[RMDB]
RNA sequence: GGGAACGACUCGAGUAGAGUCGAAAAGAAAAGAAAGAAAAGUCGACCGGUCUGAAAUAAAACAGACCACAGUUCGACUCAAGCGAUAAAUGUCGAACAUGGCAAAAGAAAGAAAAGAAAGAAGAAACACCUAAUAUAGUUUCGACUAUAUUAGGUGAAAAGAAACAACAACAACAAC
Reactivity to 2A3 in 0.01 (KOAc 150mM, MgCl2 10mM, bicine 150mM(pH8.5), 24C), signal-to-noise 4, nucleotides 027 to 126: g020a000a080a020a000g060a030a120a000g040a010a170a000a010g020u000c000g000a040c010c040g020g000u000c000u000g110a120a130a130u230a080a140a040a000c020a000g000a000c000c000a010c010a030g020u050u050c000g000a000c020u000c060a100a000g050c010g000a030u040a150a190a040u120g020u020c010g040a070a050c040a080u150g050g000c030a070a110a000a020g090a070a070a000g080a030a060a060a000g060a030a100a000g060a040a030g020a020a120a010
Reactivity to DMS in 0.01 (KOAc 150mM, MgCl2 10mM, bicine 150mM(pH8.5), 24C), signal-to-noise 4, nucleotides 027 to 126: g010a150a060a100a070g010a100a100a100g010a120a100a140a080g000u000c000g030a030c110c300g000g000u010c020u000g000a080a160a140u040a070a090a130a130c010a000g000a000c000c000a060c210a120g010u040u000c020g020a020c000u010c180a070a100g000c090g000a040u010a040a040a100u010g020u010c040g000a030a060c090a090u020g010g020c070a050a020a110a070g000a090a080a060g000a070a050a040a070g010a060a020a070g010a100a110g000a140a060a070